[RMDB]
RNA sequence: GGGAACGACUCGAGUAGAGUCGAAAAGACAGAUUUUGAGGACAAGCCUGCUCCGGAGCGAGCAUUGAGGACAUGGAAGUAUGCUCGACUGUAUGAUGAGACUAACUUUGCUGUUCUGCAGACAAGAUGAUGCCAAGCAGUUCGCUGCUUGGCAUCAAAAAGAAACAACAACAACAAC
Reactivity to 2A3 in 0.01 (KOAc 150mM, MgCl2 10mM, bicine 150mM(pH8.5), 24C), signal-to-noise 1, nucleotides 027 to 126: g010a030c000a000g110a000u000u000u160u230g000a000g040g020a070c060a040a060g030c000c000u010g000c000u030c040c040g050g010a250g070c060g000a000g020c000a000u000u140g070a160g060g040a000c000a090u300g040g000a040a020g010u040a000u090g000c000u040c000g050a000c010u010g010u300a070u090g040a010u050g000a000g000a070c010u050a020a020c000u030u080u180g140c000u000g000u040u000c070u010g000c000a000g000a100c000a000a150g050a030
Reactivity to DMS in 0.01 (KOAc 150mM, MgCl2 10mM, bicine 150mM(pH8.5), 24C), signal-to-noise 1, nucleotides 027 to 126: g000a130c080a140g000a050u030u010u020u000g000a030g000g000a200c240a090a110g010c090c080u060g010c030u000c020c100g100g050a150g030c120g000a020g100c030a120u000u000g000a080g010g040a090c010a030u010g000g030a040a030g060u000a020u060g000c030u000c000g000a010c000u000g000u010a130u000g000a070u030g020a100g000a080c020u070a060a060c000u000u000u000g000c010u000g000u000u000c100u000g000c000a100g030a060c030a020a050g000a160